[RMDB]
About this RNA
Chemical mapping of a 177-nucleotide RNA with DMS and 2A3. For 2A3, 5,959 sequencing reads were counted. For DMS, 3,057 sequencing reads were counted. Conditions: 150 mM KOAc, 10 mM MgCl2 and 150 mM bicine (pH 8.5), 24 C.
RNA sequence: GGGAACGACUCGAGUAGAGUCGAAAAGAUAUGGAAGCACUGCACACCUCAACAGCGAGUAUCGGAAACGAUACUCGACAUGAGGGUGUUGCUUCCUAAGUCAAACACAGGACUUCGGUCCUGUGAACUAUUGUGUUCCGUUCGCGGAACACAAUAGAAAAGAAACAACAACAACAAC
Reactivity to DMS in 0.01 (KOAc 150mM, MgCl2 10mM, bicine 150mM(pH8.5), 24C), signal-to-noise 4, nucleotides 027 to 126: g000a060u010a300u010g010g030a000a010g020c020a080c300u000g010c020a010c010a250c000c010u000c010a050a170c300a160g020c000g010a000g020u000a000u000c000g020g000a040a120a140c000g000a000u000a000c000u000c000g020a010c090a190u000g000a000g000g000g010u000g000u000u000g000c020u000u000c000c000u000a050a050g000u000c040a110a140a170c010a000c010a000g000g000a010c000u000u030c200g030g000u000c000c000u000g000u000g000a070a250
Reactivity to 2A3 in 0.01 (KOAc 150mM, MgCl2 10mM, bicine 150mM(pH8.5), 24C), signal-to-noise 3, nucleotides 027 to 126: g010a020u070a040u190g000g000a010a020g000c020a030c230u210g060c040a030c100a260c030c010u050c050a150a160c060a140g100c000g000a010g000u010a000u000c000g020g020a070a070a040c020g000a000u010a010c000u000c010g000a010c010a060u100g020a020g010g010g020u010g000u030u000g000c000u010u020c000c000u020a060a000g010u010c030a030a120a030c010a000c000a000g000g010a000c000u070u220c300g110g010u000c000c000u000g000u000g000a010a000